Conditions: 150 mM KOAc, 10 mM MgCl2 and 150 mM bicine (pH 8.5), 24 C. An RNA of 207 nucleotides, treated with 2A3 and DMS and read out base by base. It was measured as part of the RMDB library OK3TST. Reactivities are given for positions 27 through 156. 2A3 adducts were read by reverse transcription with SuperScript II with manganese. For DMS, 11,679 sequencing reads were counted. For 2A3, 3,674 sequencing reads were counted.
RNA sequence: GGGAACGACUCGAGUAGAGUCGAAAAUCACUUUGGGACGCUUAGAAUUUGAGCGGCUAAAUUUUGAGGUUCGGAAGAAACUGACGAACUGGUCGUGGCUCAAUUCAAUUUCUUUGAUGUCGCAUUUAAGAGAGAGUUCGAGUGAGAGUGGUAAUGGCUAGAUUGACUGGUUCGCUAGUUAGUCUAGAAAAGAAACAACAACAACAAC
Reactivity to 2A3 in 0.01 (KOAc 150mM, MgCl2 10mM, bicine 150mM(pH8.5), 24C), signal-to-noise 4, nucleotides 027 to 156: u060c000a000c010u050u020u030g060g020g010a010c010g000c040u000u030a030g000a060a070u080u050u080g000a000g010c000g010g000c020u080a020a060a100u150u150u070u180g050a020g010g000u000u010c010g030g030a050a020g040a080a120a020c050u020g020a020c010g000a020a010c010u010g020g040u060c020g020u020g060g010c010u010c060a020a020u060u000c020a020a070u040u060u040c000u030u040u040g080a130u060g060u050c020g020c090a000u020u030u120a070a010g040a000g010a000g000a000g040u060u100c040g020a010g020u030g010a060g000a010g030u050g010g020u060a080a070u100g050g000
Reactivity to DMS in 0.01 (KOAc 150mM, MgCl2 10mM, bicine 150mM(pH8.5), 24C), signal-to-noise 4, nucleotides 027 to 156: u010c020a040c050u000u000u000g040g040g020a020c000g020c020u000u000a080g010a110a080u000u010u010g010a060g020c020g000g000c020u000a040a040a140u010u000u000u000g020a270g030g010u000u000c030g020g020a170a130g010a090a060a010c040u000g000a300c210g000a030a040c030u000g020g020u000c060g010u000g040g000c050u000c030a060a060u010u000c030a060a060u000u000u000c020u000u000u010g000a090u000g020u000c060g020c050a010u010u000u000a080a090g010a140g000a120g010a090g020u010u000c040g010a130g020u000g000a060g010a100g020u000g040g020u000a060a110u000g010g010